[RMDB]
RNA sequence: GGGAACGACUCGAGUAGAGUCGAAAAUUAAUACUGCUACAUUUUUAAGACCCUUAGUUAUUUAGCUUUACCGCCCAGGAUGGGGUGCAGCGUUCCUGCAAUAUCCAGGGCACCUAGGUGCAGCCUUAUUGAUUGUGAUAUUCGUAUCACAAUCAAUAAAAGAAACAACAACAACAAC
Reactivity to 2A3 in 0.01 (KOAc 150mM, MgCl2 10mM, bicine 150mM(pH8.5), 24C), signal-to-noise 9, nucleotides 027 to 126: u070u050a050a060u080a100c040u030g030c010u040a030c050a130u060u080u030u050u120a110a060g080a150c000c000c000u020u060a040g040u040u070a160u140u150u100a030g000c000u050u040u030a030c010c020g010c000c010c010a010g020g010a020u030g020g040g030g100u030g010c000a010g020c020g080u100u090c000c000u000g010c000a010a050u020a020u100c010c010a000g000g010g010c000a020c000c020u040a030g050g000u030g030c010a010g060c010c010u020u010
Reactivity to DMS in 0.01 (KOAc 150mM, MgCl2 10mM, bicine 150mM(pH8.5), 24C), signal-to-noise 4, nucleotides 027 to 126: u020u010a070a110u010a120c050u000g010c010u010a080c060a030u010u010u000u010u010a070a110g010a200c020c020c010u000u010a080g010u000u010a090u010u030u010a080g000c060u000u000u000a080c070c100g000c000c000c020a050g030g010a020u000g010g010g010g040u010g000c020a010g010c180g010u000u010c020c010u010g010c060a040a080u010a040u000c020c020a090g010g000g020c020a050c170c060u010a060g010g010u010g000c050a070g000c080c130u000u000
An RNA of 177 nucleotides, treated with 2A3 and DMS and read out base by base. The reactions ran in a buffer of 150 mM KOAc, 10 mM MgCl2 and 150 mM bicine (pH 8.5), at 24 C. 2A3 adducts were read by reverse transcription with SuperScript II with manganese.